[RMDB]
RNA sequence: GGGAACGACUCGAGUAGAGUCGAAAACAUUCUUGAAAAAGUGAUGUAGAUUUAUAGCCCAUAACUUUUUUGAAUUACAUCGACGAUACGGCGUCGAAAGAAAAAUAAAUAGACCGUAUGAAAGAAAGACUCUAAUGAGAUUCGUCUCAUUAGAGUCAAAAGAAACAACAACAACAAC
Reactivity to 2A3 in 0.01 (KOAc 150mM, MgCl2 10mM, bicine 150mM(pH8.5), 24C), signal-to-noise 5, nucleotides 027 to 126: c000a010u030u040c020u030u040g010a020a010a010a000a020g020u010g030a010u000g040u060a080g020a220u070u230u100a130u180a100g050c000c000c000a040u120a040a030c040u070u040u000u020u030u100g140a150a100u230u110a130c060a050u020c010g000a000c000g010a020u000a010c000g000g000c000g010u000c010g000a000a030a000g060a000a070a010a000a000u100a010a040a010u060a030g090a040c000c000g000u010a020u030g060a060a070a030g040a020a080a010
Reactivity to DMS in 0.01 (KOAc 150mM, MgCl2 10mM, bicine 150mM(pH8.5), 24C), signal-to-noise 3, nucleotides 027 to 126: c020a040u000u000c010u020u000g000a020a000a020a020a010g010u000g000a000u000g010u000a080g000a140u060u020u020a080u010a180g000c040c000c000a050u030a020a020c010u000u000u000u000u020u000g010a160a050u030u040a300c080a050u000c000g000a000c000g000a050u000a000c000g000g010c000g000u000c000g020a020a060a100g000a010a020a010a010a020u000a010a000a040u000a030g010a050c000c010g000u010a010u010g000a160a070a150g010a110a100a090